RNA sequence: GGGAACGACUCGAGUAGAGUCGAAAAGAUCGGGUGUCCGCACUAAGUUCGGCAUCAAUAUGGUGACCUCCCGGGAGCGGGGGACCACCAGGUUGCCUAAGGAGGGGUGAACCGGCCCAGGUCGGAAACGGAGCAGGUCAAAACUCCCGUGCUGAUCCUCGAAUAGAAACUUCGGUUUCUAUUCGAGAAAAGAAACAACAACAACAAC
Reactivity to 2A3 in 0.01 (KOAc 150mM, MgCl2 10mM, bicine 150mM(pH8.5), 24C), signal-to-noise 2, nucleotides 027 to 156: g030a070u090c030g010g060g050u040g070u030c060c020g000c010a030c030u080a030a110g070u100u100c030g030g000c000a010u010c020a050a180u190a070u140g000g000u030g020a090c000c000u050c020c020c040g060g120g040a160g120c080g000g000g010g020g000a070c070c000a010c010c010a010g020g040u000u030g000c000c030u040a060a030g000g030a050g000g030g030g000u040g010a050a060c010c010g000g000c000c010c010a010g100g020u010c010g030g000a140a100a030c020g000g010a010g030c110a030g100g030u060c000a000a000a030a190c010u010c020c010c010g030u050g030c030u030g010a040u020c010